[RMDB]
Conditions: 150 mM KOAc, 10 mM MgCl2 and 150 mM bicine (pH 8.5), 24 C. Chemical mapping of a 177-nucleotide RNA with DMS and 2A3. DMS adducts were read by reverse transcription with MarathonRT. Source: RMDB library M2PK50, as collected in RNAgym.

RNA sequence: GGGAACGACUCGAGUAGAGUCGAAAAGGUGCGAUGUUCGCAUCGCACCAAAGAAGCUCAAAAUGACGCAAACAACGCCGUCAGCGUGAGCAAACGCGGAAAAAACCACUUGGUUCGCCAAGUGGAACCCUUACCGUUACUUCGGUAACGGUAAGGGAAAAGAAACAACAACAACAAC
Reactivity to DMS in 0.01 (KOAc 150mM, MgCl2 10mM, bicine 150mM(pH8.5), 24C), signal-to-noise 2, nucleotides 027 to 126: g000g070u000g000c020g030a000u000g020u000u020c250g040c030a050u000c000g030c000a020c000c000a010a030a030g030a140a150g010c000u020c000a020a010a060a070u000g010a000c000g020c030a140a110a100c180a140a160c210g010c110c060g000u000c000a070g000c180g000u000g000a050g000c060a030a060a060c190g010c040g000g030a000a040a150a080a110a100c000c000a010c000u000u000g000g010u000u020c110g000c000c000a000a010g000u000g000g000a010a110
Reactivity to 2A3 in 0.01 (KOAc 150mM, MgCl2 10mM, bicine 150mM(pH8.5), 24C), signal-to-noise 1, nucleotides 027 to 126: g010g010u000g020c000g000a010u000g000u040u080c100g040c060a000u000c000g010c000a000c000c000a000a010a020g000a000a010g000c010u000c000a000a010a010a160u040g000a010c000g030c040a000a200a220c030a120a140c200g100c170c020g040u030c000a010g000c070g110u060g000a000g010c010a040a110a000c120g030c080g060g000a070a090a000a010a020a070c010c000a010c000u030u000g040g000u030u040c140g000c050c000a000a000g010u010g000g000a010a020
Annotation:
For DMS, 1,172 sequencing reads were counted.